This 177-nucleotide RNA was probed chemically with 2A3 and DMS. DMS (dimethyl sulfate) methylates the pairing face of unpaired adenines and cytosines. 2A3 is a SHAPE reagent: it acylates the 2'-hydroxyl of flexible nucleotides of all four kinds. The RNA was probed in 150 mM KOAc, 10 mM MgCl2 and 150 mM bicine (pH 8.5) at 24 C. The data come from the RNA Mapping Database (RMDB), library OK1LIB. 2A3 adducts were read by reverse transcription with SuperScript II with manganese.
[RMDB]
RNA sequence: GGGAACGACUCGAGUAGAGUCGAAAAGAAAGCGCGAAUCGUAUUCCGGUUGGCCGGGCUAAAGUGCGAGCGAAGCUCGCAGGAACAGGAAAUGCCGGGCACGGCAAACUGCGGUGAGAGCGCGAAAGGGUAAUCAAUAGUUCGCUAUUGAUUACCCAAAAGAAACAACAACAACAAC
Reactivity to 2A3 in 0.01 (KOAc 150mM, MgCl2 10mM, bicine 150mM(pH8.5), 24C), signal-to-noise 4, nucleotides 027 to 126: g040a000a090a000g000c000g000c010g010a060a010u000c000g010u070a060u090u060c020c020g080g100u040u080g160g010c000c020g070g010g000c000u050a090a070a050g140u030g000c000g000a000g000c110g140a140a050g020c000u000c000g000c000a020g000g040a070a090c090a150g060g100a110a060a090u140g010c000c000g040g010g000c010a010c020g000g000c010a050a050a040c050u020g010c010g040g000u010g010a140g010a010g020c010g000c000g060a050a010a000
Reactivity to DMS in 0.01 (KOAc 150mM, MgCl2 10mM, bicine 150mM(pH8.5), 24C), signal-to-noise 3, nucleotides 027 to 126: g010a150a060a170g000c000g000c010g030a120a080u000c000g000u020a110u030u010c030c050g010g020u040u000g000g000c010c000g000g020g030c010u000a040a090a140g010u010g010c010g000a000g020c020g010a160a190g010c000u000c000g000c000a050g000g010a080a140c180a070g010g010a090a060a110u030g030c030c000g000g000g050c040a040c010g020g000c150a030a030a110c070u000g000c050g000g010u010g010a070g000a300g000c000g010c000g040a040a020a140